[RMDB]
RNA sequence: GGGAACGACUCGAGUAGAGUCGAAAACCGCGCCGCUGGUGACAGUGGUGGCAAGGUAAACCCCACCGGGAGCAAGACCGAAUAGGGAUGACACGGGGCGGGCGAAAGCCUGUUCACAGCCGGUUUCUUUCAACUCCUCUUUCGAGAGGAGUUGAAAAAAAGAAACAACAACAACAAC
Reactivity to DMS in 0.01 (KOAc 150mM, MgCl2 10mM, bicine 150mM(pH8.5), 24C), signal-to-noise 2, nucleotides 027 to 126: c000c000g010c060g010c050c000g000c030u000g000g000u020g000a230c010a000g000u040g020g010u000g000g050c010a110a070g000g030u020a060a100a070c070c000c000c030a180c040c090g030g000g000a040g000c180a080a150g000a220c000c070g010a160a010u010a240g030g000g040a110u010g030a110c160a070c180g010g000g000g010c000g030g010g000c000g000a060a120a200g000c040c000u000g000u000u000c060a010c190a170g000c000c050g000g000u000u000u030c150
Reactivity to 2A3 in 0.01 (KOAc 150mM, MgCl2 10mM, bicine 150mM(pH8.5), 24C), signal-to-noise 2, nucleotides 027 to 126: c000c000g020c010g000c000c000g000c000u030g010g100u070g030a040c000a070g000u000g030g000u020g000g000c060a180a080g000g000u030a030a080a080c020c000c000c000a040c000c000g040g000g000a060g070c050a060a000g060a110c000c000g010a080a060u110a210g020g000g020a030u020g100a010c030a040c040g040g000g000g000c000g000g040g020c030g030a010a080a000g020c000c000u010g020u080u070c070a100c040a070g050c020c010g080g000u050u030u010c040
The data come from the RNA Mapping Database (RMDB), library RFM100. The record gives the reactivity of an RNA of 177 nucleotides to DMS and 2A3. 2A3 adducts were read by reverse transcription with SuperScript II with manganese. Conditions: 150 mM KOAc, 10 mM MgCl2 and 150 mM bicine (pH 8.5), 24 C. For DMS the reverse transcriptase was MarathonRT.